An RNA of 207 nucleotides, treated with DMS and 2A3 and read out base by base. 2A3 adducts were read by reverse transcription with SuperScript II with manganese. Reactivities are given for positions 27 through 156. The RNA was probed in 150 mM KOAc, 10 mM MgCl2 and 150 mM bicine (pH 8.5) at 24 C.

[RMDB]
RNA sequence: GGGAACGACUCGAGUAGAGUCGAAAAAAAUGCCGCCGUUUGAAGUGUUUAAAAGAGAUUUUCAAGCUAGUUAGUCCAUCCGAGCCUCUGUUGAACGGCGUUUUGGGCUAGCGAAUUUCUAAAUAGUUCGACUAUGAGUGUAGAGAUUGACGUGGCACGUUGAAACAAGGUUCGCCUUGUUUCAACGAAAAGAAACAACAACAACAAC
Reactivity to DMS in 0.01 (KOAc 150mM, MgCl2 10mM, bicine 150mM(pH8.5), 24C), signal-to-noise 1, nucleotides 027 to 156: a090a060a110u000g020c030c010g030c000c060g050u010u000u000g020a110a150g030u010g010u000u000u000a040a040a080a150g030a080g010a120u000u000u000u000c060a060a090g050c030u000a070g040u010u000a050g000u010c020c000a030u010c170c050g000a110g000c010c000u000c050u000g020u000u000g000a060a060c080g020g020c000g050u000u000u000u000g000g000g020c020u010a050g010c020g010a090a030u000u000u010c090u000a030a060a080u000a110g010u000u000c010g030a070c040u010a090u010g010a100g000u010g000u000a100g010a090g010a120u010u000g030a080c050g010u010g000g010c030a130
Reactivity to 2A3 in 0.01 (KOAc 150mM, MgCl2 10mM, bicine 150mM(pH8.5), 24C), signal-to-noise 1, nucleotides 027 to 156: a000a000a050u020g010c000c000g000c010c000g030u050u040u000g040a030a040g010u030g050u170u220u250a000a060a060a030g120a000g000a010u060u110u030u060c030a040a030g000c030u010a030g000u010u000a000g000u010c000c010a000u020c130c020g070a050g020c050c020u280c220u130g070u050u050g010a020a010c020g020g000c000g010u080u000u060u000g010g000g000c000u010a000g030c010g000a020a040u090u190u000c050u030a060a060a040u020a000g010u030u050c010g030a010c050u010a020u140g030a040g070u030g010u050a030g070a040g010a140u090u220g020a020c010g010u040g040g020c020a020